[RMDB]
RNA sequence: GGGAACGACUCGAGUAGAGUCGAAAAGGACUGCGCAGUCCGGCAACAUCAGCAGAGAGCCCGCUAUACGUGACGGAUUGGCUGAAGCGCACAGAAAUAUUGAGCCUCCUGCAAGAGGCAGCCAAGCAAAACGUACGUGAGUUCGCUCACGUACGAAUCUUAAUGUUAAGUUCGCUUAACAUUAAGAAAAAGAAACAACAACAACAAC
Reactivity to DMS in 0.01 (KOAc 150mM, MgCl2 10mM, bicine 150mM(pH8.5), 24C), signal-to-noise 4, nucleotides 027 to 156: g020g000a050c010u000g040c050g020c050a140g010u000c020c010g010g030c040a050a090c030a080u000c060a120g030c020a080g010a150g010a140g010c040c020c010g000c050u000a140u000a090c060g000u010g020a120c010g030g000a130u000u000g020g030c010u000g020a070a170g000c080g020c040a120c070a090g000a090a080a150u000a140u010u000g000a170g010c010c010u000c000c010u020g020c160a110a120g000a060g020g010c000a050g000c050c030a060a110g010c050a060a050a070a200c020g010u000a010c010g060u000g010a030g030u000u000c300g000c010u010c010a010c020g010u000a000c010g000a020a050
Reactivity to 2A3 in 0.01 (KOAc 150mM, MgCl2 10mM, bicine 150mM(pH8.5), 24C), signal-to-noise 8, nucleotides 027 to 156: g020g010a020c030u050g030c080g020c060a030g030u000c000c000g020g030c020a080a060c020a130u110c030a010g030c040a010g070a010g010a030g130c020c030c020g000c020u110a110u050a160c100g050u060g090a020c030g030g040a070u050u040g040g000c010u020g020a090a020g020c030g030c040a020c030a030g210a040a140a020u260a100u130u140g040a020g010c000c000u000c010c040u100g070c030a070a030g000a000g020g000c000a000g020c010c010a020a020g010c040a040a070a030a040c000g010u000a000c000g000u000g000a000g010u040u110c180g020c080u000c000a000c000g010u000a000c000g000a000a010

Overview: This 207-nucleotide RNA was probed chemically with DMS and 2A3. The 2A3 profile rests on 9,090 reads. For 2A3 the reverse transcriptase was SuperScript II with manganese. The data come from the RNA Mapping Database (RMDB), library M2RFPK. For DMS the reverse transcriptase was MarathonRT. Conditions: 150 mM KOAc, 10 mM MgCl2 and 150 mM bicine (pH 8.5), 24 C.